This 177-nucleotide RNA was probed chemically with DMS and 2A3. The reactions ran in a buffer of 150 mM KOAc, 10 mM MgCl2 and 150 mM bicine (pH 8.5), at 24 C. Reactivities are given for positions 27 through 126. For 2A3, 4,743 sequencing reads were counted. DMS (dimethyl sulfate) methylates the pairing face of unpaired adenines and cytosines. Values are in units of 0.01, from 0 to 300, in steps of 10. For 2A3 the reverse transcriptase was SuperScript II with manganese.
[RMDB]
RNA sequence: GGGAACGACUCGAGUAGAGUCGAAAAGCACCGCCGCAGUGCAGCCAACCACCAACCGCACACACGCUGCCCGAGCCUGCUACUGUCGCAGUCAUACCCGGUCCGGGGCCGGACCCGGGUAGGCGUACCGAUAGGAUUAGUUCGCUAAUCCUAUCGGAAAAGAAACAACAACAACAAC
Reactivity to DMS in 0.01 (KOAc 150mM, MgCl2 10mM, bicine 150mM(pH8.5), 24C), signal-to-noise 4, nucleotides 027 to 126: g010c040a080c040c030g020c050c060g010c050a090g020u000g020c040a080g000c040c080a110a110c070c030a050c050c060a050a070c100c060g000c050a040c100a070c120a070c070g010c030u000g010c040c040c030g010a110g000c050c020u000g010c040u010a060c080u000g000u010c080g010c070a080g000u010c050a140u000a030c000c000c000g000g010u000c020c000g000g010g020g020c170c030g020g000a020c070c030c030g010g020g010u000a000g020g010c050g010u000a100
Reactivity to 2A3 in 0.01 (KOAc 150mM, MgCl2 10mM, bicine 150mM(pH8.5), 24C), signal-to-noise 3, nucleotides 027 to 126: g010c010a000c030c040g090c050c010g010c090a040g040u040g030c010a020g060c030c020a040a050c020c000a040c000c010a040a040c030c040g010c020a000c000a000c000a010c090g020c030u030g010c010c000c020g010a020g010c010c010u020g030c020u070a090c040u120g080u150c040g010c080a030g010u050c020a100u020a040c000c000c000g010g000u000c020c000g010g030g290g070c120c020g030g000a030c050c160c000g000g000g000u000a010g000g000c020g000u030a050